Chemical mapping of a 177-nucleotide RNA with 2A3 and DMS.
The DMS profile rests on 4,377 reads.
Reactivities are given for positions 27 through 126.
Reactivities are rounded to 0.1 and cut off at 0 and 3.
For 2A3, 1,737 sequencing reads were counted.

[RMDB]
RNA sequence: GGGAACGACUCGAGUAGAGUCGAAAACAGAUGUUCAAGACGGCAGUCGUUGUCUGUGCGGGGUCGUGGGAGCACGUGGCUGGUUCUGCCGAGCUGGCGAGAAGUGAUCAAGUUCUGGUGAAGUCGAAUCGAGAUGACUAUUCGUAGUCAUCUCGAUAAAAGAAACAACAACAACAAC
Reactivity to 2A3 in 0.01 (KOAc 150mM, MgCl2 10mM, bicine 150mM(pH8.5), 24C), signal-to-noise 2, nucleotides 027 to 126: c040a000g100a080u180g000u200u160c020a020a050g030a030c020g000g050c050a020g020u070c020g060u110u070g050u000c040u020g030u030g020c040g000g010g020g010u040c020g040u080g020g000g000a050g010c020a010c070g020u030g030g010c020u020g020g060u050u070c000u040g070c030c000g020a030g030c030u030g020g000c040g060a040g010a050a030g090u090g020a050u080c030a050a050g000u080u000c030u060g070g030u080g040a040a020g070u100c090g040a030
Reactivity to DMS in 0.01 (KOAc 150mM, MgCl2 10mM, bicine 150mM(pH8.5), 24C), signal-to-noise 3, nucleotides 027 to 126: c050a090g000a060u000g010u000u010c070a100a130g010a080c050g000g000c070a050g000u000c060g020u010u000g010u000c020u010g000u000g020c120g000g020g020g020u000c040g010u000g000g010g010a110g030c040a020c080g010u020g000g020c030u000g010g010u010u000c030u000g020c050c080g010a080g000c060u010g000g020c030g000a090g000a100a090g020u010g000a110u000c080a060a100g010u000u000c030u000g000g000u020g010a080a140g000u010c070g010a110